[RMDB]
RNA sequence: GGGAACGACUCGAGUAGAGUCGAAAAGCUGCAUGGCAGAAGGCUGAAGAGCAAGAGAGCUUGAGAAAGCAAGAGAGGGCUGAGCUCGUUUUUUAUAACAACCCACUCCUGCGAUAACAUUAAUCCACCGAUGGGAGCAGAACCCUCAGGGCCUAAACACUAAUACGAUGUUCGCAUCGUAUUAGUGAAAAGAAACAACAACAACAAC
Reactivity to DMS in 0.01 (KOAc 150mM, MgCl2 10mM, bicine 150mM(pH8.5), 24C), signal-to-noise 2, nucleotides 027 to 156: g000c070u020g000c060a060u000g060g000c010a050g000a030a030g010g020c010u010g010a080a020g020a060g020c030a090a080g020a130g000a100g020c080u000u000g000a140g010a150a070a140g020c020a030a050g000a060g020a100g050g020g020c000u000g010a140g020c050u000c100g010u040u020u030u000u000u000a040u000a110a100c030a050a070c010c000c020a050c010u010c000c020u000g020c020g010a120u000a100a110c090a140u010u010a090a120u000c030c020a040c050c050g020a060u020g020g000g000a090g060c020a160g000a050a180c020c010c030u000c010a060g000g010g040c060c030u000a050a060a200
Reactivity to 2A3 in 0.01 (KOAc 150mM, MgCl2 10mM, bicine 150mM(pH8.5), 24C), signal-to-noise 3, nucleotides 027 to 156: g060c090u100g030c050a100u050g010g040c000a000g000a010a010g020g000c020u020g000a000a010g000a000g010c000a060a000g060a000g000a010g050c020u070u080g030a010g060a140a040a010g000c050a040a000g040a010g010a020g040g060g000c060u050g040a020g050c020u020c060g030u010u000u010u030u070u130a170u070a060a060c060a010a030c000c010c030a040c010u010c000c010u020g000c030g050a020u060a120a010c040a020u080u150a100a060u030c080c020a020c030c060g030a060u110g030g000g000a020g000c010a010g020a050a060c000c000c010u000c030a010g030g010g000c020c000u030a070a060a020
Structure probing data (DMS and 2A3) for a 207-nucleotide construct.
Conditions: 150 mM KOAc, 10 mM MgCl2 and 150 mM bicine (pH 8.5), 24 C.
Source: RMDB library OK3TST, as collected in RNAgym.
2A3 adducts were read by reverse transcription with SuperScript II with manganese.